Record summary:
This 177-nucleotide RNA was probed chemically with DMS and 2A3. 2A3 adducts were read by reverse transcription with SuperScript II with manganese. Source: RMDB library OK2TST, as collected in RNAgym. The reactions ran in a buffer of 150 mM KOAc, 10 mM MgCl2 and 150 mM bicine (pH 8.5), at 24 C.

RNA sequence: GGGAACGACUCGAGUAGAGUCGAAAAUACUUAAUACCAUCAUACAGUUAACACUGAACCGUGAUGGUGUAAUGAUUAUGGGCGCUCCUGAUUUUGACUGCGACUGGACACCAGAAAUGGUCUACAAACGCUUACAAAUGUUCGCAUUUGUAAGCGUAAAAGAAACAACAACAACAAC
Reactivity to DMS in 0.01 (KOAc 150mM, MgCl2 10mM, bicine 150mM(pH8.5), 24C), signal-to-noise 2, nucleotides 027 to 126: u000a100c110u000u000a050a120u010a010c000c000a000u000c010a050u000a210c040a000g000u000u010a140a120c300a100c040u010g010a120a060c220c200g000u000g000a020u000g000g020u010g030u010a030a060u010g010a050u010u000a050u000g020g020g010c030g010c050u000c000c000u000g020a130u020u000u000u000g000a050c100u000g030c150g020a130c050u000g000g000a050c110a070c020c010a030g010a040a040a080u000g000g030u000c050u000a150c240a080a200
Reactivity to 2A3 in 0.01 (KOAc 150mM, MgCl2 10mM, bicine 150mM(pH8.5), 24C), signal-to-noise 1, nucleotides 027 to 126: u060a010c040u040u050a050a000u040a120c000c030a000u000c000a000u020a030c010a000g050u030u100a250a020c100a000c130u040g160a150a090c110c190g010u000g010a020u000g000g100u000g000u000a100a090u120g130a020u010u300a150u250g070g010g000c060g040c000u040c060c020u000g120a180u000u020u220u200g000a030c010u040g000c010g030a020c020u060g000g060a050c020a060c010c020a030g040a000a070a040u040g000g050u000c020u030a010c020a030a250